Record summary: An RNA of 177 nucleotides, treated with 2A3 and DMS and read out base by base.

RNA sequence: GGGAACGACUCGAGUAGAGUCGAAAACAAAUACAAAGAAGGUUUUGGUGAGCUGGUUACUAACGAGUUUUUCACGACUGAUGGCAAUGUUUGGUACUACGCCGGUGCAAAUGGUAAAACCGUUACCGCGUGUUAUGUUCUUCGGAACAUAACACGCAAAAGAAACAACAACAACAAC
Reactivity to 2A3 in 0.01 (KOAc 150mM, MgCl2 10mM, bicine 150mM(pH8.5), 24C), signal-to-noise 1, nucleotides 027 to 126: c000a000a050a000u300a050c040a040a190a040g120a010a070g030g000u050u070u170u070g040g000u070g000a020g000c040u030g080g030u000u070a090c040u050a080a000c020g010a020g060u080u000u000u000u160c080a090c050g070a020c020u080g000a080u110g040g000c000a020a010u030g020u080u010u110g080g000u000a020c020u030a020c150g030c030c000g000g020u030g010c020a000a130a220u070g040g020u100a110a030a050a100c060c000g020u110u040a050c050c050
Reactivity to DMS in 0.01 (KOAc 150mM, MgCl2 10mM, bicine 150mM(pH8.5), 24C), signal-to-noise 1, nucleotides 027 to 126: c100a080a100a060u010a110c050a090a030a120g020a090a250g010g010u000u000u000u010g010g010u010g010a020g010c010u000g010g000u010u000a040c130u010a020a050c020g010a040g000u040u000u000u000u000c010a060c210g000a050c090u000g000a070u000g010g000c020a080a080u000g000u000u000u000g010g010u020a040c060u000a020c120g010c060c070g000g000u010g010c100a130a050a080u000g010g020u010a020a040a100a290c090c030g000u000u000a030c060c090